[RMDB]
RNA sequence: GGGAACGACUCGAGUAGAGUCGAAAACGUAAAGGGCGAGCUUUUGUCCGGAAUGGUUCCGCCGUGAUCGGGCCAUGCAAUAGUUGCCAACCACAACUAUGCUCCGGUUGCUCAGGCAGCGUAACGCACAAUGGAACAACCUUCGGGUUGUUCCAAACCACCGUUUGAUCUUCGGAUCAAACGGUGGAAAAGAAACAACAACAACAAC
Reactivity to 2A3 in 0.01 (KOAc 150mM, MgCl2 10mM, bicine 150mM(pH8.5), 24C), signal-to-noise 2, nucleotides 027 to 156: c010g010u100a060a020a140g030g080g020c040g000a060g000c050u100u080u130u170g080u020c000c080g000g020a080a050u050g020g000u300u130c040c030g030c020c020g200u130g070a130u100c000g000g000g030c000c000a050u030g050c020a100a230u000a000g000u000u000g010c040c060a030a000c010c010a000c010a000a000c000u000a000u030g000c020u000c000c000g000g010u050u090g000c050u000c040a070g090g010c020a010g040c010g040u050a050a010c070g000c010a040c060a190a180u060g010g000a000a060c030a010a000c020c010u070u090c120g060g000g000u000u000g000u010u000c000c000a000a000a000